[RMDB]
RNA sequence: GGGAACGACUCGAGUAGAGUCGAAAAGACCCCACUCGACAGGGUCCGCGUACCAUCCUUUCUUACCUGAUGGCCGGCAUGGUCCCAGCCUCCUCGCUGGCGCCGGCUGGGCAACAUUCCGAGGGGAGUCUUAAUAAGACUUCGGUCUUAUUAAGACAAAAGAAACAACAACAACAAC
Reactivity to 2A3 in 0.01 (KOAc 150mM, MgCl2 10mM, bicine 150mM(pH8.5), 24C), signal-to-noise 2, nucleotides 027 to 126: g020a010c000c020c030c000a040c050u070c030g110a040c050a070g090g000g020u020c030c020g040c050g050u060a080c000c020a020u030c000c020u060u060u070c010u060u090a090c030c030u050g040a070u070g090g070c020c010g000g000c050a070u120g070g010u060c010c000c020a010g010c010c010u040c010c000u030c030g020c020u040g040g000c020g010c020c030g040g000c020u020g010g020g000c000a050a030c000a080u110u070c060c020g010a020g000g020g030g010a030
Reactivity to DMS in 0.01 (KOAc 150mM, MgCl2 10mM, bicine 150mM(pH8.5), 24C), signal-to-noise 3, nucleotides 027 to 126: g000a130c040c010c000c040a130c080u000c070g010a060c140a150g000g000g010u020c020c050g010c110g030u020a070c080c040a150u020c040c030u000u010u010c050u000u010a070c100c080u000g000a080u000g010g020c000c020g010g000c000a100u010g020g010u010c300c000c000a080g010c020c060u000c070c070u000c100g020c030u000g020g010c170g010c000c000g000g020c010u020g000g000g010c060a060a110c070a090u010u010c100c090g010a050g030g000g000g010a200